[RMDB]
RNA sequence: GGGAACGACUCGAGUAGAGUCGAAAAAUCAAUUUCGAUUACCGCAAUUUUAGUCUUAGGUGUUGAUUGCAUGAUGAAUGCAGAAGUUAUACCUGCAGCCAUAUUAGCACCUUCAUUAUUGUGUAUAAAUUAUCCCUUUCUUCGGAAAGGGAUAAUUAAAAGAAACAACAACAACAAC
Reactivity to 2A3 in 0.01 (KOAc 150mM, MgCl2 10mM, bicine 150mM(pH8.5), 24C), signal-to-noise 2, nucleotides 027 to 126: a000u060c030a010a060u090u150u150c120g060a030u050u090a080c050c040g000c010a010a020u000u000u000u170a120g060u070c120u120u040a000g000g000u010g050u000u020g020a030u040u070g060c100a050u140g040a090u070g010a300a040u040g020c000a000g010a070a020g020u080u260a130u180a270c020c000u000g000c000a080g170c030c010a030u040a010u080u020a030g010c000a000c060c020u030u020c010a000u000u070a010u060u040g000u000g030u010a060u010a300
Reactivity to DMS in 0.01 (KOAc 150mM, MgCl2 10mM, bicine 150mM(pH8.5), 24C), signal-to-noise 4, nucleotides 027 to 126: a080u010c050a090a140u010u010u010c100g010a110u000u000a160c230c040g020c040a000a010u000u000u020u010a060g020u020c190u020u010a010g040g040u010g010u000u000g010a030u000u000g030c150a110u010g000a150u000g000a110a090u000g000c010a020g020a090a070g010u000u000a100u010a200c150c010u010g000c000a020g000c150c060a030u000a040u000u000a010g010c000a020c000c000u000u010c060a010u000u000a020u010u000g000u000g000u000a080u000a070
Notes: Structure probing data (2A3 and DMS) for a 177-nucleotide construct. Reactivities are rounded to 0.1 and cut off at 0 and 3. For 2A3, 1,112 sequencing reads were counted. The data come from the RNA Mapping Database (RMDB), library OK2TST.